The record gives the reactivity of an RNA of 177 nucleotides to 2A3 and DMS. DMS adducts were read by reverse transcription with MarathonRT.

RNA sequence: GGGAACGACUCGAGUAGAGUCGAAAAGACGGACGAACCUCUGGUGUGCCAGUUGUUCCGCCAGGAGCACUGCUGGUUAGCUACGUUCGGAAGGGAUAACCGCUGAAAGCAUCUAAGCGGGAAGCCUGAUUAAACUAUCAUUCGUGAUAGUUUAAUCAAAAGAAACAACAACAACAAC
Reactivity to 2A3 in 0.01 (KOAc 150mM, MgCl2 10mM, bicine 150mM(pH8.5), 24C), signal-to-noise 9, nucleotides 027 to 126: g080a010c050g050g030a010c000g000a010a000c000c000u000c010u010g000g020u050g050u130g040c000c000a010g010u020u010g010u020u000c010c020g070c090c060a110g000g000a010g000c010a020c070u090g000c000u000g010g000u040u090a010g000c000u010a010c140g000u000u000c000g000g000a010a010g020g000g000a010u030a050a060c000c000g000c010u010g050a110a080a040g110c030a060u050c060u110a050a010g000c000g000g010g010a010a030g020c000c010u000
Reactivity to DMS in 0.01 (KOAc 150mM, MgCl2 10mM, bicine 150mM(pH8.5), 24C), signal-to-noise 9, nucleotides 027 to 126: g000a140c070g010g010a300c010g000a010a010c010c000u000c010u000g000g010u000g000u010g000c000c010a010g010u000u010g010u000u000c010c000g010c230c300a140g000g000a020g010c020a030c300u010g000c000u000g000g000u000u010a300g020c000u000a010c110g000u000u000c000g010g010a260a130g000g000g000a040u000a100a190c000c000g020c000u000g000a130a130a150g010c160a050u020c060u000a160a050g010c000g000g000g000a060a100g000c010c010u010